[RMDB]
RNA sequence: GGGAACGACUCGAGUAGAGUCGAAAAAUUCUUUCGAGUCUGUAGUUGCGGGACGUCUAUCCCUAGUCCAUGGCAGAUGCGGUCGAAAGGAUCCACGUAAGUCGAACCGACCUGGUCGGGGAGGCGAUCAUGGCGCAUCCUAGAGGUAAGUCGCACCGCCCGUUUACUUACGACGCGGCAUACGGCCGCGACGGGCGAGAGGGUAACCGGUGGGAGCUGGGCCCCGGUGCGCGAGUGUGGGGGCAAAGACUAGGUCAGUCGAAAGGGCGUCAAGGUUCGCCUUGACGAAAAGAAACAACAACAACAAC
Reactivity to 2A3 in 0.01 (KOAc 150mM, MgCl2 10mM, bicine 150mM(pH8.5), 24C), signal-to-noise 2, nucleotides 027 to 266: a000u050u040c000u000u000u000c000g000a000g130u050c010u020g020u040a020g000u000u020g040c020g010g000g010a000c060g180u120c200u260a180u050c010c000c000u000a000g010u010c070c040a200u300g030g000c010a000g000a000u020g000c000g010g010u000c000g000a000a000a000g010g000a000u000c000c000a010c020g020u010a020a030g010u010c010g000a010a000c020c000g020a030c060c230u230g140g050u010c000g000g000g000g020a020g010g010c010g000a000u010c010a010u010g000g010c000g000c000a010u000c010c000u090a110g050a040g220g070u000a010a020g030u020c010g000c010a000c000c010g000c000c000c000g000u030u050u130a160c080u180u080a120c130g200a060c050g180c000g020g000c030a140u240a300c160g180g010c030c000g000c020g020a000c000g000g000g000c000g000a010g000a000g020g030g000u060a160a060c010c000g000g000u020g020g080g010a070g010c010u010g010g000g010c000c000c000c000g100g010u000g000c000g000c000g000a010g030u060g010u020g000g010g000g010g010c010a000a020a000g000a000c000u000a000g000g000u010c000a000g010u000c010g010a000a020a000g020g030g040
Reactivity to DMS in 0.01 (KOAc 150mM, MgCl2 10mM, bicine 150mM(pH8.5), 24C), signal-to-noise 3, nucleotides 027 to 266: a110u000u040c000u000u000u000c000g000a020g010u020c010u010g020u000a050g000u010u000g010c060g010g010g040a000c200g020u000c240u020a280u000c000c000c010u000a100g000u000c010c010a070u040g000g010c010a040g010a040u000g010c050g000g010u000c010g000a030a040a030g000g000a010u010c010c010a020c050g010u000a040a070g000u010c020g000a300a250c000c020g010a020c000c140u010g050g010u000c000g000g000g000g000a300g000g010c000g000a030u000c020a050u000g000g000c060g010c030a020u000c000c200u000a040g010a160g000g020u000a020a020g000u010c000g000c010a030c030c010g010c010c000c000g000u000u000u000a120c200u010u010a130c190g010a150c060g020c000g000g000c000a110u020a100c240g020g010c010c000g030c020g010a000c020g010g010g010c010g000a030g000a150g000g000g000u010a150a160c010c020g010g040u000g000g020g000a100g010c000u000g000g020g000c020c020c010c010g000g010u000g010c010g020c000g000a090g010u000g000u000g000g020g000g000g000c030a010a240a040g000a030c000u000a030g000g000u000c010a020g000u000c000g010a000a050a030g010g000g000
This 307-nucleotide RNA was probed chemically with 2A3 and DMS.
DMS adducts were read by reverse transcription with MarathonRT.
2A3 adducts were read by reverse transcription with SuperScript II with manganese.
Reactivities are given for positions 27 through 266.
The reactions ran in a buffer of 150 mM KOAc, 10 mM MgCl2 and 150 mM bicine (pH 8.5), at 24 C.
For 2A3, 2,912 sequencing reads were counted.